[RMDB]
RNA sequence: GGGAACGACUCGAGUAGAGUCGAAAACCCAUCUACCAGGAUACAGCAAAUUUCAUGUAGGUGGGGAAUUUGGGGGGAAAUAGUUAUCAACACAGUGUUAACUGGCUACUUGAUUCUGCAUGUCAGUGGUAGCUCUGACCCACUGAGCCCUUGCCCAACGUUUUAAAAUAUUCGUAUUUUAAAACGUAAAAGAAACAACAACAACAAC
Reactivity to DMS in 0.01 (KOAc 150mM, MgCl2 10mM, bicine 150mM(pH8.5), 24C), signal-to-noise 3, nucleotides 027 to 156: c000c000c000a010u010c010u000a020c040c140a270g030g010a100u020a130c070a300g050c160a110a110a070u010u000u000c030a180u000g020u000a020g020g010u010g000g020g010g020a030a020u000u000u020g000g020g010g000g020g010a030a100a060u000a070g020u000u000a090u000c020a050a120c060a110c060a070g010u000g020u000u000a050a110c040u010g030g020c020u000a020c060u010u000g000a100u010u010c070u000g000c060a100u030g020u010c030a080g040u000g020g020u000a050g010c000u000c060u000g010a270c050c010c020a030c020u000g000a080g020c000c030c040u000u000g000c000c000c000a160
Reactivity to 2A3 in 0.01 (KOAc 150mM, MgCl2 10mM, bicine 150mM(pH8.5), 24C), signal-to-noise 3, nucleotides 027 to 156: c000c010c000a000u000c000u010a020c010c060a040g070g030a030u060a120c080a080g220c120a120a150a170u050u090u120c050a050u070g000u010a010g030g010u030g000g030g020g100a030a080u270u280u220g040g020g000g000g030g040a120a030a010u090a010g070u090u080a060u200c040a050a030c060a010c000a140g000u010g030u130u080a090a090c020u020g050g010c020u020a040c000u040u020g010a050u200u110c040u040g050c050a190u120g150u200c000a000g020u020g020g020u030a010g020c010u030c040u090g080a090c000c020c000a000c000u000g010a020g000c020c000c000u000u050g020c040c010c000a010
The record gives the reactivity of an RNA of 207 nucleotides to DMS and 2A3. The 2A3 profile rests on 1,338 reads. For DMS the reverse transcriptase was MarathonRT. The reactions ran in a buffer of 150 mM KOAc, 10 mM MgCl2 and 150 mM bicine (pH 8.5), at 24 C.